[RMDB]
RNA sequence: GGGAACGACUCGAGUAGAGUCGAAAAUGAAAGCGCGAACUCAGCCGAAAGGCACCGCGAAGAAAAACAGGAUGACGCGCAUCCCACAUCCAGCGGACUCACGCAGAGACGCGGAAGAGAUAAAAAACAGCUAGAUUAGGUUCGCCUAAUCUAGCUGAAAAGAAACAACAACAACAAC
Reactivity to 2A3 in 0.01 (KOAc 150mM, MgCl2 10mM, bicine 150mM(pH8.5), 24C), signal-to-noise 1, nucleotides 027 to 126: u110g020a000a040a030g030c010g000c010g030a090a010c050u020c050a070g010c000c050g080a050a010a010g020g030c030a030c030c040g000c050g040a110a170g050a040a160a010a030a000c080a040g120g000a050u040g050a030c000g020c020g060c020a050u080c000c010c000a020c000a040u020c000c000a040g110c020g140g000a240c010u030c050a070c050g200c070a000g000a000g000a050c000g000c000g000g000a050a050g020a010g010a000u170a130a150a000a000a010a010
Reactivity to DMS in 0.01 (KOAc 150mM, MgCl2 10mM, bicine 150mM(pH8.5), 24C), signal-to-noise 1, nucleotides 027 to 126: u000g000a070a090a260g020c000g000c030g000a120a220c170u030c030a100g070c000c000g030a090a070a070g020g030c000a240c180c110g070c030g000a160a070g000a020a020a020a130a100c210a130g080g000a030u000g000a300c110g000c000g050c040a060u000c000c020c000a100c090a070u000c070c010a090g000c000g000g020a140c090u000c000a100c230g000c130a180g000a090g000a160c000g000c000g050g010a170a030g000a160g000a140u010a000a000a150a000a020a090